Source: RMDB libraries RFM100 and RFMREP, as collected in RNAgym. An RNA of 177 nucleotides, treated with DMS and 2A3 and read out base by base.
RNA sequence: GGGAACGACUCGAGUAGAGUCGAAAACUUCGCAAUAAACCUAUCGGACCCGGGGGCGGUACCCGGCGCCUCCACCAGAACCCAGGACCGAUGGCCGCAGAGUGUCGGCGGUGUUGGGUUCCGGCGGAUUAGAGUUAUAGUUCGCUAUAACUCUAAUAAAAGAAACAACAACAACAAC
Reactivity to DMS in 0.01 (KOAc 150mM, MgCl2 10mM, bicine 150mM(pH8.5), 24C), signal-to-noise 6, nucleotides 027 to 126: c080u000u010c070g010c080a110a070u020a060a110a110c040c040u000a070u010c030g010g010a110c060c020c040g020g010g000g000g010c090g000g010u010a070c030c010c010g000g000c140g000c030c020u010c000c000a120c010c000a040g000a020a020c000c000c000a020g000g000a020c000c000g000a080u020g010g000c000c020g000c220a110g010a240g010u020g030u000c000g010g010c010g000g020u000g000u000u000g000g000g000u000u000c000c020g010g020c090g000g000
Reactivity to 2A3 in 0.01 (KOAc 150mM, MgCl2 10mM, bicine 150mM(pH8.5), 24C), signal-to-noise 9, nucleotides 027 to 126: c030u130u090c050g010c070a070a160u130a190a100a060c030c010u060a100u120c030g030g030a080c020c010c020g000g000g000g000g010c020g010g010u050a060c000c000c000g000g000c000g010c000c010u020c000c000a020c000c000a000g000a000a000c010c000c000a000g010g040a000c000c000g010a020u020g010g000c010c010g090c110a150g080a070g190u270g070u060c010g020g050c100g010g000u230g300u020u020g000g000g000u000u000c000c000g010g010c010g020g000
Overview: Conditions: 150 mM KOAc, 10 mM MgCl2 and 150 mM bicine (pH 8.5), 24 C.